[RMDB]
RNA sequence: GGGAACGACUCGAGUAGAGUCGAAAACCGUGCAGCGAAAACGAGCUCGGACAGUCGCUCAUACAUCGCAUCCUUGGCGCUCUCGAGGAGCGAACAGCCUUGAGAGUCGUGUUCGCAGACGGCCUCGACCACAGUGAGCAGACCCCGGCAGGACCGGCGAUCCUGGUAUGUUCGCAUACCAGGAUCGAAAAGAAACAACAACAACAAC
Reactivity to 2A3 in 0.01 (KOAc 150mM, MgCl2 10mM, bicine 150mM(pH8.5), 24C), signal-to-noise 2, nucleotides 027 to 156: c010c000g010u120g000c120a060g000c030g010a030a030a020a070c020g020a060g140c010u030c050g060g070a050c020a080g030u080c080g050c010u030c010a050u090a100c070a130u030c010g040c030a100u040c020c010u020u020g020g000c090g000c070u040c050u040c050g030a000g010g040a030g000c010g060a060a050c040a030g040c000c020u070u100g050a050g000a010g080u030c000g020u020g030u040u010c030g000c040a030g040a060c000g000g020c000c040u020c040g000a030c000c030a010c020a040g130u090g140a010g020c000a040g010a280c030c000c010c010g040g030c040a090g020g180a100c030c000g070g000